[RMDB]
RNA sequence: GGGAACGACUCGAGUAGAGUCGAAAAUGAUCAUUGACCUUAAGUUUUGGUACAUCUAGAUUAAGGCUUCUCAACCUCAACGCUAUUGGAAUUUUAGGUCUAAUAAUUCUUUGCUAUGGGAGCCUCUUCUGUGCAUUGCAGGGUGCUUAGCAGCAUCCCUAUUUAUCUUAUUCGUAAGAUAAAUAGGAAAAGAAACAACAACAACAAC
Reactivity to DMS in 0.01 (KOAc 150mM, MgCl2 10mM, bicine 150mM(pH8.5), 24C), signal-to-noise 5, nucleotides 027 to 156: u000g010a080u000c060a110u000u000g000a070c010c010u000u000a040a060g020u000u000u010u000g020g010u000a040c040a080u010c070u000a070g030a200u000u000a040a030g020g020c030u000u000c130u000c120a070a030c030c040u000c050a030a060c040g000c160u000a040u010u000g010g000a030a010u000u000u000u000a030g010g010u000c020u000a040a070u000a030a070u000u000c060u000u000u000g020c040u000a120u000g020g010g010a120g030c080c010u010c030u000u010c010u000g040u000g010c070a100u000u000g010c030a070g010g020g020u000g010c010u000u010a130g040c150a100g010c030a080u000c010

The record gives the reactivity of an RNA of 207 nucleotides to DMS. The reactions ran in a buffer of 150 mM KOAc, 10 mM MgCl2 and 150 mM bicine (pH 8.5), at 24 C. Source: RMDB library OK3TST, as collected in RNAgym. The DMS profile rests on 16,837 reads. Values cover nucleotides 27 to 156.